Conditions: 150 mM KOAc, 10 mM MgCl2 and 150 mM bicine (pH 8.5), 24 C. Chemical mapping of a 177-nucleotide RNA with DMS and 2A3.
[RMDB]
RNA sequence: GGGAACGACUCGAGUAGAGUCGAAAAUAGCUGACGUUCGCGUCAGCUAAAAGCACCAAAACCUCCUGGCGCUGCGGCGCCGGCCCCGCCGGGAAGGCCGCCAACUCGAUGGGUUCGCCCAUCGAAACUAGUUCUAGCUAUUCGUAGCUAGAACUAGAAAAGAAACAACAACAACAAC
Reactivity to DMS in 0.01 (KOAc 150mM, MgCl2 10mM, bicine 150mM(pH8.5), 24C), signal-to-noise 3, nucleotides 027 to 126: u000a000g010c010u000g010a010c000g030u000u020c230g050c010g020u000c000a010g000c000u000a000a020a060a090g000c130a170c020c020a070a040a160a200c060c040u000c020c010u000g000g010c000g020c130u000g010c060g030g030c010g030c100c180g000g000c010c030c040c050g000c010c020g010g000g010a050a070g010g010c070c050g010c030c120a080a100c170u000c000g010a000u000g010g000g010u000u000c170g020c010c000c010a000u000c010g000a010a050a100
Reactivity to 2A3 in 0.01 (KOAc 150mM, MgCl2 10mM, bicine 150mM(pH8.5), 24C), signal-to-noise 2, nucleotides 027 to 126: u040a010g000c000u000g010a010c000g010u040u040c300g030c000g070u000c010a000g000c000u000a000a000a000a000g040c030a100c030c000a040a050a130a170c020c010u010c000c020u020g000g030c020g010c120u170g000c110g050g000c030g000c130c000g020g010c020c000c010c050g020c000c030g000g000g030a010a030g030g010c000c020g030c030c000a060a040c050u020c020g000a000u010g020g000g050u050u050c150g100c010c000c000a010u010c000g010a010a000a000
The data come from the RNA Mapping Database (RMDB), library M2PK50.
For DMS, 2,760 sequencing reads were counted.
High 2A3 reactivity points to a flexible backbone, as in loops and unpaired stretches.
2A3 adducts were read by reverse transcription with SuperScript II with manganese.